[RMDB]
RNA sequence: GGGAACGACUCGAGUAGAGUCGAAAAGAUAUGGACUUCAUGAGGGAGAUACUUGUCGGAAACGACAAGGUAUCGACGAUCUCAGAAGUCCUAAGUCAAAAGCAAGUGGUCUUCGGACCACUUGCAAGUAAAUACACUGGUUCGCCAGUGUAUUUACAAAAGAAACAACAACAACAAC
Reactivity to 2A3 in 0.01 (KOAc 150mM, MgCl2 10mM, bicine 150mM(pH8.5), 24C), signal-to-noise 3, nucleotides 027 to 126: g000a000u020a010u050g000g000a000c000u000u020c040a270u200g000a000g000g010g020a050g010a010u000a020c010u020u000g000u010c010g000g000a020a000a010c010g010a000c010a000a010g060g030u020a010u000c000g070a090c010g000a010u010c000u000c020a020g010a000a000g000u000c000c000u000a000a000g000u000c020a020a020a030a190g000c000a000a010g000u010g010g000u000c020u080u200c300g140g010a000c010c000a000c010u000u000g010c000a000a000
Reactivity to DMS in 0.01 (KOAc 150mM, MgCl2 10mM, bicine 150mM(pH8.5), 24C), signal-to-noise 4, nucleotides 027 to 126: g000a000u000a050u000g000g000a010c000u000u000c000a110u000g000a020g010g010g000a010g010a020u000a080c000u000u000g010u010c000g020g000a010a020a040c000g010a010c000a000a010g020g010u000a020u000c000g000a120c300g000a040u000c000u000c000a030g000a020a010g010u000c000c000u000a000a060g010u000c010a130a100a120a170g000c000a000a000g030u000g000g010u000c000u000u020c280g030g010a010c000c010a000c010u000u000g010c000a010a060

Record summary:
The data come from the RNA Mapping Database (RMDB), library TTRDES. Structure probing data (2A3 and DMS) for a 177-nucleotide construct. Values cover nucleotides 27 to 126. For 2A3, 17,908 sequencing reads were counted. For 2A3 the reverse transcriptase was SuperScript II with manganese. The DMS profile rests on 8,979 reads. The reactions ran in a buffer of 150 mM KOAc, 10 mM MgCl2 and 150 mM bicine (pH 8.5), at 24 C.